[RMDB]
RNA sequence: GGGAACGACUCGAGUAGAGUCGAAAACGAAAGCGUUCGCGCUUUCGAAAAAAGCGUACUACCUUGAGCAUCCCGCUCAUAACGCCUCCCAAAUAGGAGGUAUCAAGCGGAUGAACUACUCAAGGUAUCGCAAAAAAGAUAGUGUUCGCACUAUCAACAUACUGUGAUCCUUCGGGAUCACAGUAUGAAAAGAAACAACAACAACAAC
Reactivity to 2A3 in 0.01 (KOAc 150mM, MgCl2 10mM, bicine 150mM(pH8.5), 24C), signal-to-noise 4, nucleotides 027 to 156: c000g000a000a000a000g040c020g030u110u210c280g010c010g020c110u010u000u020c000g000a090a000a000a000a010a000g020c030g020u070a110c050u000a000c020c010u000u000g000a010g010c000a020u170c110c090c030g000c010u060c050a190u180a130a040c130g010c000c000u040c000c020c030a140a250a030u300a110g010g000a010g000g020u020a050u140c100a030a010g000c010g020g030a010u020g020a040a100c090u210a040c000u300c010a000a000g000g000u000a000u010c000g000c000a000a000a000a000a000a210g000a000u010a000g000u010g050u070u080c280g050c100a000c000u000a000u020c010a000a000
Reactivity to DMS in 0.01 (KOAc 150mM, MgCl2 10mM, bicine 150mM(pH8.5), 24C), signal-to-noise 2, nucleotides 027 to 156: c000g020a000a000a020g020c020g040u000u000c300g000c070g000c000u000u000u030c000g000a010a030a070a080a050a100g020c000g010u000a070c140u000a010c000c000u000u010g040a010g010c000a100u000c030c000c010g020c010u000c110a110u010a100a010c030g000c000c010u010c020c000c010a070a190a200u010a050g010g000a080g020g010u000a010u000c050a050a060g030c000g010g000a100u000g000a180a300c010u010a020c000u000c000a000a040g010g020u000a000u000c010g030c010a000a050a070a070a070a100g010a020u000a020g020u000g000u000u020c230g030c020a030c000u000a000u000c010a100a290

Chemical mapping of a 207-nucleotide RNA with 2A3 and DMS. The reactions ran in a buffer of 150 mM KOAc, 10 mM MgCl2 and 150 mM bicine (pH 8.5), at 24 C. Reactivities are given for positions 27 through 156. The data come from the RNA Mapping Database (RMDB), library RNAMAK.